This 207-nucleotide RNA was probed chemically with 2A3 and DMS.
It was measured as part of the RMDB library RNAMAK.
For DMS the reverse transcriptase was MarathonRT.

[RMDB]
RNA sequence: GGGAACGACUCGAGUAGAGUCGAAAACAGUGAUUCGUCACUGAAAAAAACCUUUGUGUUAUCGCGAAAGGGAGUGUCUGACGACCCAUUGGGUCGGAUGACACGAGGAUCUUUCGACCCGAUAACACUCUGGUAAAAAGCCAUGUUCGCAUGGCAAAUAUCUAUUCGGGUUCGCCCGAAUAGAUAUAAAAGAAACAACAACAACAAC
Reactivity to 2A3 in 0.01 (KOAc 150mM, MgCl2 10mM, bicine 150mM(pH8.5), 24C), signal-to-noise 7, nucleotides 027 to 156: c010a000g000u000g010a030u060u220c200g050u030c120a010c010u000g080a210a020a000a000a010a000a010c010c010u010u010u010g000u000g000u000u000a000u000c010g010c010g030a010a000a000g010g010g000a020g000u010g010u000c010u060g160a030c010g000a000c000c030c120a240u250u300g010g000g000u000c010g010g000a020u070g010a000c000a000c000g000a020g000g000a010u000c000u000u000u010c020g040a110c060c060c040g000a000u000a000a000c000a000c000u000c000u000g010g020u120a120a070a010a030a010g000c000c000a000u010g040u050u100c290g010c150a000u000g000g000c000a020a080
Reactivity to DMS in 0.01 (KOAc 150mM, MgCl2 10mM, bicine 150mM(pH8.5), 24C), signal-to-noise 4, nucleotides 027 to 156: c000a040g030u000g000a030u000u010c300g000u000c020a010c010u000g000a010a000a040a090a080a100a060c000c000u000u020u000g030u010g020u010u000a020u000c000g030c010g000a030a030a020g010g010g010a080g040u000g020u000c010u010g010a300c030g000a010c000c000c020a300u000u000g030g020g010u010c000g000g010a210u000g010a020c000a010c030g020a060g030g000a040u000c000u000u000u000c020g000a050c150c080c070g000a040u000a010a010c000a010c010u000c020u000g000g020u000a030a050a110a110a180g000c000c000a000u000g010u000u010c300g040c030a030u010g020g020c010a020a050